[RMDB]
Chemical mapping of a 177-nucleotide RNA with DMS and 2A3.
It was measured as part of the RMDB library TTRDES.

RNA sequence: GGGAACGACUCGAGUAGAGUCGAAAAGAUAUGGAGGUUGUGGCUGCGAUAAGAUCCCACUCGGAAACGAGUGGAUCUUUUGACGCAGAGCAACCUCCUAAGUCAAACGCGUAGUUCGCUACGCGAACGGAGUGAUGAGGUUCGCCUCAUCACUCCGAAAAGAAACAACAACAACAAC
Reactivity to DMS in 0.01 (KOAc 150mM, MgCl2 10mM, bicine 150mM(pH8.5), 24C), signal-to-noise 5, nucleotides 027 to 126: g000a020u000a300u010g010g020a000g020g020u000u000g020u000g010g010c030u010g010c010g000a140u000a010a010g010a000u000c110c050c020a000c010u010c000g020g000a100a160a250c000g020a000g040u000g000g010a010u010c000u000u010u020u000g020a190c070g010c000a030g030a300g010c000a000a000c000c000u010c000c000u000a000a070g000u000c040a060a140a140c040g000c000g010u000a010g010u000u020c300g030c010u000a010c010g010c000g000a080a150
Reactivity to 2A3 in 0.01 (KOAc 150mM, MgCl2 10mM, bicine 150mM(pH8.5), 24C), signal-to-noise 4, nucleotides 027 to 126: g020a030u070a050u190g000g000a000g020g030u020u020g020u100g300g300c030u000g010c020g050a070u020a110a010g000a010u120c090c050c010a010c010u010c000g030g020a110a090a070c010g020a010g000u000g000g000a000u000c000u000u030u020u100g080a070c070g010c000a000g000a000g000c000a000a000c000c010u000c010c000u000a000a000g000u000c010a020a030a050c020g000c000g000u000a010g020u090u080c300g000c170u000a000c000g000c000g020a090a020
2A3 adducts were read by reverse transcription with SuperScript II with manganese. Values cover nucleotides 27 to 126. The 2A3 profile rests on 13,472 reads. Conditions: 150 mM KOAc, 10 mM MgCl2 and 150 mM bicine (pH 8.5), 24 C.